An RNA of 177 nucleotides, treated with 2A3 and DMS and read out base by base.
The reactions ran in a buffer of 150 mM KOAc, 10 mM MgCl2 and 150 mM bicine (pH 8.5), at 24 C.
The data come from the RNA Mapping Database (RMDB), library TTRDES.
[RMDB]
RNA sequence: GGGAACGACUCGAGUAGAGUCGAAAAGAUAUGGAUCGCUAGUGCUAUGAACUACAGCGGUAAUCGGAAACGAUUACGGCUGCAUAGCAGGCGAUCCUAAGUCAAAACGGGAGGUUCGCCUCCCGAACCGAAGGACUAACUUCGGUUAGUCCUUCGGAAAAGAAACAACAACAACAAC
Reactivity to 2A3 in 0.01 (KOAc 150mM, MgCl2 10mM, bicine 150mM(pH8.5), 24C), signal-to-noise 1, nucleotides 027 to 126: g040a030u070a080u190g020g000a010u010c010g020c060u090a100g300u040g090c000u000a000u060g040a100a060c110u190a030c300a000g000c070g220g010u000a000a000u000c000g010g000a100a040a000c000g000a000u000u010a000c060g300g000c020u020g070c000a010u010a000g000c000a000g000g030c060g000a000u000c000c020u030a000a010g040u010c040a000a090a000a110c010g000g000g010a010g040g040u090u190c280g140c080c000u000c000c000c000g000a000a010
Reactivity to DMS in 0.01 (KOAc 150mM, MgCl2 10mM, bicine 150mM(pH8.5), 24C), signal-to-noise 1, nucleotides 027 to 126: g000a070u000a300u000g000g000a030u000c020g020c010u000a130g030u000g040c010u000a000u000g010a150a040c110u010a290c000a000g020c030g000g030u000a010a000u000c000g010g000a130a090a080c010g030a020u030u000a010c000g000g040c000u000g000c010a000u000a000g000c010a070g000g010c010g020a000u000c000c020u000a030a060g030u000c060a060a090a230a160c040g010g010g010a040g010g050u000u010c300g040c060c000u000c010c000c020g000a000a030